[RMDB]
RNA sequence: GGGAACGACUCGAGUAGAGUCGAAAAUAAAAUCGUUGGGCGAGACGAUCGACGUAAAUCGCUCAAACUACUCGAGACCAAAGGAAUACGCUUCGGUAACUCGCUCUAAUCCCGAGCGAUAAAUGAAGCUCAACAUCUUAUUCGUAAGAUGUUGAGCAAAAGAAACAACAACAACAAC
Reactivity to 2A3 in 0.01 (KOAc 150mM, MgCl2 10mM, bicine 150mM(pH8.5), 24C), signal-to-noise 3, nucleotides 027 to 126: u060a010a060a010a060u020c010g000u030u000g010g000g000c000g000a010g030a030c020g010a080u110c070g060a040c010g030u060a030a090a060u100c060g010c040u050c060a000a030a020c000u000a010c000u000c000g020a010g030a090c020c020a080a030a020g130g050a160a050u110a170c030g000c030u070u070c010g010g000u010a020a020c010u000c000g000c000u000c000u010a040a030u020c030c000c000g000a010g000c000g010a000u090a030a040a050u140g070a040a020
Reactivity to DMS in 0.01 (KOAc 150mM, MgCl2 10mM, bicine 150mM(pH8.5), 24C), signal-to-noise 2, nucleotides 027 to 126: u010a120a110a100a100u000c020g020u000u000g010g000g030c020g010a040g010a050c030g010a150u000c090g000a080c060g000u000a050a170a110u000c060g020c090u000c070a040a030a270c020u000a000c030u000c020g040a020g000a110c090c040a110a130a040g010g010a200a090u010a010c060g000c010u000u000c040g000g000u000a050a070c170u000c000g000c000u010c000u000a120a180u000c050c010c040g000a020g010c010g000a080u000a040a060a130u000g000a050a150

Source: RMDB library M2PK90, as collected in RNAgym. This 177-nucleotide RNA was probed chemically with 2A3 and DMS. For DMS the reverse transcriptase was MarathonRT.